RNA sequence: GGGAACGACUCGAGUAGAGUCGAAAAGGAGCUUUUUCGGCGGAGGAGCUCCCUCCCCGUCCUUCCCUUUUCUUAUUAUUCCGAGGAUGUUUCCCAGCCAGGGAUUUUCAUCCUCGAGUUUCUUGAUGGCGCAGUCUGUUCGCAGACUGCAAAAGAAACAACAACAACAAC
Reactivity to DMS in 0.01 (KOAc 150mM, MgCl2 10mM, bicine 150mM(pH8.5), 24C), signal-to-noise 1, nucleotides 027 to 129: g050g000a070g040c090u030u030u030u040u010c090g000g040c150g070g000a050g010g070a100g010c040u000c010c100c030u020c030c030c030c020g000u000c000c020u010u020c000c020c040u000u050u040u070c180u000u000a130u080u080a150u070u080c100c020g020a010g030g030a030u020g000u000u010u030c000c000c010a220g070c140c190a000g030g000g000a020u040u010u010u010c030a030u020c020c010u020c000g010a020g000u000u000u000c000u030u000g050a070u080g030g000c120
Reactivity to 2A3 in 0.01 (KOAc 150mM, MgCl2 10mM, bicine 150mM(pH8.5), 24C), signal-to-noise 4, nucleotides 027 to 129: g000g010a030g040c020u000u000u030u110u150c010g060g020c060g040g020a010g030g010a030g000c010u010c000c000c000u010c080c000c010c000g010u020c000c000u000u000c010c020c000u040u100u100u050c110u060u180a290u130u050a130u180u050c070c010g000a010g000g000a010u010g000u000u000u060c000c000c020a000g140c110c130a180g020g000g000a000u080u020u010u070c010a010u000c000c000u000c000g000a000g000u010u000u000c020u020u030g080a060u170g060g040c090

The record gives the reactivity of an RNA of 170 nucleotides to DMS and 2A3. DMS adducts were read by reverse transcription with MarathonRT. 2A3 adducts were read by reverse transcription with SuperScript II with manganese.